[RMDB]
Structure probing data (2A3 and DMS) for a 177-nucleotide construct. It was measured as part of the RMDB library OK2TST. For 2A3, 2,661 sequencing reads were counted. For 2A3 the reverse transcriptase was SuperScript II with manganese.
RNA sequence: GGGAACGACUCGAGUAGAGUCGAAAACAUGGUCAUGUGGUAGUCGUCCGUGAACACGGCCGGGAGGCUGUAGAUCUCGCCGUCGGGAUAGGUGAUGGCGUCCUUCACCCACGGCUCGGCCUCGAAGUCUGCAAUACGUUUUCGAACGUAUUGCAGAAAAAGAAACAACAACAACAAC
Reactivity to 2A3 in 0.01 (KOAc 150mM, MgCl2 10mM, bicine 150mM(pH8.5), 24C), signal-to-noise 2, nucleotides 027 to 126: c020a060u130g060g000u080c030a050u070g040u040g090g060u070a060g060u050c030g030u000c040c040g050u050g050a060a030c100a010c100g020g040c010c000g020g090g000a010g020g000c030u060g010u100a050g020a150u060c030u020c130g030c040c020g010u040c100g000g080g000a110u110a090g070g020u120g040a080u100g060g060c030g040u070c010c010u000u000c020a110c060c010c000a030c000g040g000c000u020c010g040g000c000c020u000c020g010a050a000g070
Reactivity to DMS in 0.01 (KOAc 150mM, MgCl2 10mM, bicine 150mM(pH8.5), 24C), signal-to-noise 3, nucleotides 027 to 126: c120a080u000g000g010u000c050a070u000g040u000g020g020u010a090g000u000c050g010u010c010c040g020u010g000a120a100c100a070c050g010g000c030c010g040g030g000a080g000g010c010u000g010u010a080g010a080u020c070u000c090g020c030c020g020u010c140g010g010g020a140u000a040g000g010u010g010a100u010g010g010c110g000u000c020c020u010u010c170a110c030c000c040a050c030g010g000c030u000c050g010g000c050c010u000c050g020a110a140g000